The record gives the reactivity of an RNA of 177 nucleotides to DMS and 2A3. DMS adducts were read by reverse transcription with MarathonRT. The reactions ran in a buffer of 150 mM KOAc, 10 mM MgCl2 and 150 mM bicine (pH 8.5), at 24 C.
[RMDB]
RNA sequence: GGGAACGACUCGAGUAGAGUCGAAAAUCCCGUUCCCUCGCGGAACAGGGAGUGUUAGCGCACGGCUGAGGGAACUACAAAAGCCUCGGGCCAUCGUGCCCGAGGCUGUUUACUCCGUUCUCGCGGGGAUGACGGACAUGUUCGCAUGUCCGUCAUCAAAAGAAACAACAACAACAAC
Reactivity to DMS in 0.01 (KOAc 150mM, MgCl2 10mM, bicine 150mM(pH8.5), 24C), signal-to-noise 2, nucleotides 027 to 126: u000c000c000c000g000u010u000c030c000c000u010c010g030c040g020g010a080a060c050a190g030g000g000a060g010u000g020u040u010a070g010c160g030c070a080c100g000g020c050u030g030a040g000g000g000a070a020c020u010a210c190a070a090a100a020g020c000c000u010c080g000g010g000c040c010a100u050c300g020u050g030c000c010c020g020a010g010g000c000u000g010u000u010u000a110c020u000c030c040g030u000u000c000u050c020g000c020g070g000g010
Reactivity to 2A3 in 0.01 (KOAc 150mM, MgCl2 10mM, bicine 150mM(pH8.5), 24C), signal-to-noise 1, nucleotides 027 to 126: u000c000c000c050g000u140u130c030c000c000u000c020g020c040g000g010a010a010c030a160g000g020g240a060g000u030g100u070u250a050g050c030g000c180a040c220g140g000c060u030g000a060g050g010g040a060a030c000u090a020c010a020a130a000a000g000c000c000u020c000g100g000g000c030c000a230u200c230g080u150g000c000c000c000g000a000g000g010c000u010g010u000u000u000a000c000u000c000c000g030u000u040c120u000c050g030c040g020g010g000